Source: RMDB library M2PK50, as collected in RNAgym. Chemical mapping of a 177-nucleotide RNA with 2A3 and DMS.
[RMDB]
RNA sequence: GGGAACGACUCGAGUAGAGUCGAAAAGAAACAUGGUUCGCCAUGUUUCAAAGAAGCUCAUAAUGACGCAAAGAACGGCGUCGCCGUGAGCAAACGGCGAAAAAAGACUUAUCUUCGGAUAAGUCAACAGUAUUCUAAACUUCGGUUUAGAAUACUGAAAAGAAACAACAACAACAAC
Reactivity to 2A3 in 0.01 (KOAc 150mM, MgCl2 10mM, bicine 150mM(pH8.5), 24C), signal-to-noise 5, nucleotides 027 to 126: g010a000a010a000c010a010u010g000g040u030u050c100g020c050c000a000u010g000u000u010u000c000a000a000a010g070a050a010g020c010u000c040a060u070a190a100u190g010a010c010g000c020a130a160a110g110a250a080c110g090g000c000g010u000c010g000c000c010g010u010g020a040g030c020a030a060a000c020g070g020c050g060a090a050a000a020a010a010g000a000c000u000u000a000u000c010u030u060c200g020g000a010u010a010a010g000u000c000a000a000
Reactivity to DMS in 0.01 (KOAc 150mM, MgCl2 10mM, bicine 150mM(pH8.5), 24C), signal-to-noise 5, nucleotides 027 to 126: g000a010a000a010c000a010u000g010g020u000u000c200g030c000c000a010u000g010u010u000u000c010a020a130a120g010a130a130g010c000u000c010a040u000a070a110u000g000a020c000g020c010a060a090a170g000a110a110c290g010g000c010g010u000c000g000c090c070g010u000g000a040g000c080a050a070a060c060g010g000c090g010a000a040a050a060a080a090g000a020c010u000u000a000u000c000u000u010c170g020g000a010u000a000a010g010u000c000a030a060
Conditions: 150 mM KOAc, 10 mM MgCl2 and 150 mM bicine (pH 8.5), 24 C.
Reactivities are given for positions 27 through 126.
2A3 adducts were read by reverse transcription with SuperScript II with manganese.
For DMS the reverse transcriptase was MarathonRT.